[RMDB]
Structure probing data (DMS and 2A3) for a 177-nucleotide construct. The reactions ran in a buffer of 150 mM KOAc, 10 mM MgCl2 and 150 mM bicine (pH 8.5), at 24 C. 2A3 adducts were read by reverse transcription with SuperScript II with manganese. It was measured as part of the RMDB library OK2TST.
RNA sequence: GGGAACGACUCGAGUAGAGUCGAAAACGGCAGCCACACCCAAAGUAAAUUAUUUAAUGAUAGCCUUGGAUGUAAAACACAUUGGAUUGAUACACAAACCAAGUUUAACUACAGAAAUCGGUGGCAACGUAGCUAUCGUGUUCGCACGAUAGCUACGAAAAGAAACAACAACAACAAC
Reactivity to DMS in 0.01 (KOAc 150mM, MgCl2 10mM, bicine 150mM(pH8.5), 24C), signal-to-noise 1, nucleotides 027 to 126: c190g060g030c090a070g000c010c060a010c030a110c050c080c000a040a060a080g000u000a060a080a090u020u000a130u020u000u000a010a110u000g010a080u000a140g010c020c030u000u000g010g020a070u000g000u000a010a030a100a120c230a020c100a300u000u020g010g000a070u000u000g000a140u010a050c250a110c140a030a050a030c030c000a010a030g000u000u020u050a140a070c020u000a080c090a050g000a050a010a050u000c090g050g020u000g040g040c050a130a070
Reactivity to 2A3 in 0.01 (KOAc 150mM, MgCl2 10mM, bicine 150mM(pH8.5), 24C), signal-to-noise 1, nucleotides 027 to 126: c020g070g030c040a040g000c040c010a030c010a060c000c020c040a010a020a000g050u050a010a170a140u190u070a160u190u170u180a130a140u080g000a070u050a020g010c000c000u000u000g030g020a030u040g050u040a050a090a100a040c050a070c070a100u000u100g080g000a060u050u040g030a040u120a200c100a000c020a170a080a010c010c020a020a000g010u050u030u010a050a010c010u070a020c000a010g120a000a070a000u200c070g040g000u010g000g050c000a000a000
The 2A3 profile rests on 712 reads. DMS adducts were read by reverse transcription with MarathonRT.